The record gives the reactivity of an RNA of 207 nucleotides to 2A3 and DMS. For 2A3 the reverse transcriptase was SuperScript II with manganese. For 2A3, 2,945 sequencing reads were counted.
RNA sequence: GGGAACGACUCGAGUAGAGUCGAAAAGGCGAUGAACCUCUGUUUCAGGUCAAUACAUGGCUGUUUGAUUAUCUCAGGGCAGUAAGGAACUUGGAAGCCGUGGUGUGCCCAGACUACAUGAUGUGUGCCCUCCGUCAGUGGACCACAGUCCACGAGGAAGUACUUCUUACUUCGGUAAGAAGUACUUAAAAGAAACAACAACAACAAC
Reactivity to 2A3 in 0.01 (KOAc 150mM, MgCl2 10mM, bicine 150mM(pH8.5), 24C), signal-to-noise 4, nucleotides 027 to 156: g020g000c030g070a110u060g060a080a060c020c010u000c060u050g040u050u040u060c020a010g010g030u020c040a070a060u130a140c080a080u100g050g000c020u030g090u040u090u060g110a110u100u170a100u090c070u020c050a020g050g020g000c000a010g010u050a050a060g060g050a090a050c020u040u060g030g060a060a020g000c030c030g030u030g020g000u060g030u040g050c000c000c000a030g040a030c040u090a030c020a080u090g030a060u040g100u040g030u060g070c030c000c000u020c020c010g080u090c070a080g010u000g020g010a010c010c040a110c140a160g000u000c000c000a000c010g000a020g030g010
Reactivity to DMS in 0.01 (KOAc 150mM, MgCl2 10mM, bicine 150mM(pH8.5), 24C), signal-to-noise 4, nucleotides 027 to 156: g020g050c020g010a160u010g010a140a030c020c010u030c030u020g010u000u000u000c030a110g030g010u000c010a050a130u010a100c070a080u000g010g000c020u000g010u000u000u000g010a110u000u000a080u000c060u010c060a160g030g020g040c020a080g030u020a080a180g010g000a040a090c060u010u010g010g010a140a100g020c030c040g040u010g010g000u000g040u000g020c010c020c030a180g010a090c030u000a040c040a090u000g010a080u010g040u010g000u000g000c010c000c010u010c000c030g000u000c050a130g030u000g010g010a030c000c120a080c180a100g000u000c000c010a030c010g000a160g030g010